[RMDB]
RNA sequence: GGGAACGACUCGAGUAGAGUCGAAAAUUAAAGAGCGUAGCACACACUCAGACUAAGUCUGACACACACAUACGCUAAUCAUCUCUGUGUGUGUUCGAGAUAUCGAUAUGUGUAUGAGAUGAAAAAAGGCUAUGUUAAGUUUCGACUUAACAUAGCCAAAAGAAACAACAACAACAAC
Reactivity to 2A3 in 0.01 (KOAc 150mM, MgCl2 10mM, bicine 150mM(pH8.5), 24C), signal-to-noise 3, nucleotides 027 to 126: u160u100a100a070a040g110a010g020c010g010u000a010g010c030a000c000a010c000a000c010u030c040a030g020a050c080u230a250a110g080u030c000u020g010a000c010a000c000a000c000a000c000a010u010a020c010g010c040u070a070a040u010c010a010u000c000u000c000u000g000u000g010u000g000u000g000u040u020c010g040a010g030a070u160a060u150c020g010a010u010a020u100g000u000g000u010a020u030g000a000g000a000u020g000a090a000a000a010a000a000
Reactivity to DMS in 0.01 (KOAc 150mM, MgCl2 10mM, bicine 150mM(pH8.5), 24C), signal-to-noise 3, nucleotides 027 to 126: u010u030a060a100a110g010a110g010c000g020u000a010g020c100a020c010a020c020a040c260u010c010a030g030a050c160u020a140a150g010u000c010u000g000a010c040a030c030a010c000a000c000a060u000a010c010g000c020u000a070a050u000c000a010u000c010u000c060u000g010u000g010u000g010u000g010u000u000c090g010a010g010a140u030a060u000c010g000a040u000a040u000g010u000g000u010a080u000g020a020g010a000u010g010a000a040a070a080a090a080
An RNA of 177 nucleotides, treated with 2A3 and DMS and read out base by base. The reactions ran in a buffer of 150 mM KOAc, 10 mM MgCl2 and 150 mM bicine (pH 8.5), at 24 C. Reactivities are given for positions 27 through 126. For DMS the reverse transcriptase was MarathonRT. Source: RMDB library M2PK90, as collected in RNAgym.